[RMDB]
RNA sequence: GGGAACGACUCGAGUAGAGUCGAAAACUAGCAGGGUUCGCCCUGCUAGAAAAGCGCCGAUGGUAGUGUGGGGACUCCCCAUGCGAGAGUAGGGAACUGCCAAAAGUGAAGUGUUCGCACUUCACAAGUGUUACACAGAGUUCGCUCUGUGUAACACAAAAGAAACAACAACAACAAC
Reactivity to DMS in 0.01 (KOAc 150mM, MgCl2 10mM, bicine 150mM(pH8.5), 24C), signal-to-noise 3, nucleotides 027 to 126: c000u000a020g010c010a020g020g000g040u010u000c260g030c000c010c000u000g000c000u010a000g000a010a050a100a160g020c250g020c020c000g000a140u070g010g000u000a080g010u000g020u000g010g000g000g020a280c190u020c030c000c000c010a000u000g000c020g000a190g020a030g000u000a120g020g000g010a060a120c060u000g010c030c060a060a070a060a120g000u000g000a010a010g020u000g000u010u010c160g010c000a000c000u000u000c000a000c000a040a060
Reactivity to 2A3 in 0.01 (KOAc 150mM, MgCl2 10mM, bicine 150mM(pH8.5), 24C), signal-to-noise 3, nucleotides 027 to 126: c010u000a000g000c000a010g020g050g000u090u130c120g100c010c010c000u000g000c000u000a010g000a000a000a000a000g070c160g070c010c020g040a050u010g000g030u000a020g010u000g020u010g000g010g000g300a300c060u260c050c020c010c000a000u020g010c000g000a040g010a010g020u020a010g000g030g000a030a080c070u120g090c030c020a040a100a040a030g000u010g010a010a000g010u010g020u080u160c190g020c080a000c000u000u030c000a000c000a010a020
Source: RMDB library M2PK50, as collected in RNAgym.
This 177-nucleotide RNA was probed chemically with DMS and 2A3.
The RNA was probed in 150 mM KOAc, 10 mM MgCl2 and 150 mM bicine (pH 8.5) at 24 C.
For 2A3, 3,653 sequencing reads were counted.